[RMDB]
RNA sequence: GGGAACGACUCGAGUAGAGUCGAAAAAGAGUGGCAAUAGCGGGUUCCCCCCAAUACUACCCGCAGGUAGACCUUGGUGGAGAUGUCUAGUGAGGUAGAGCGACCGAUUGGGUGGCCAGCAGUAGAAAUAGUCCAUGUUCUUCGGAACAUGGACUAUAAAAGAAACAACAACAACAAC
Reactivity to DMS in 0.01 (KOAc 150mM, MgCl2 10mM, bicine 150mM(pH8.5), 24C), signal-to-noise 3, nucleotides 027 to 126: a030g000a050g020u010g020g020c080a120a080u010a080g000c000g000g000g000u010u010c000c000c000c000c020c030a030a030u010a080c070u030a030c020c010c080g010c060a100g010g000u020a040g000a090c070c050u010u010g010g000u020g000g010a040g030a080u020g010u000c020u000a070g010u030g000a100g040g020u000a090g020a110g020c040g020a090c050c080g010a090u010u000g010g010g010u030g020g000c030c020a050g020c050a110g000u020a100g030a090a110
Reactivity to 2A3 in 0.01 (KOAc 150mM, MgCl2 10mM, bicine 150mM(pH8.5), 24C), signal-to-noise 2, nucleotides 027 to 126: a020g150a050g020u060g010g020c010a120a140u040a160g060c020g000g000g000u040u110c030c000c000c000c000c030a070a010u100a170c010u000a030c000c010c000g030c030a000g050g030u020a040g000a020c000c000u020u030g200g000u040g090g060a130g000a050u120g010u040c020u050a070g040u010g070a100g010g000u080a060g000a000g060c070g130a040c070c000g020a040u040u080g000g000g000u020g080g000c000c000a020g010c030a020g000u170a030g000a050a080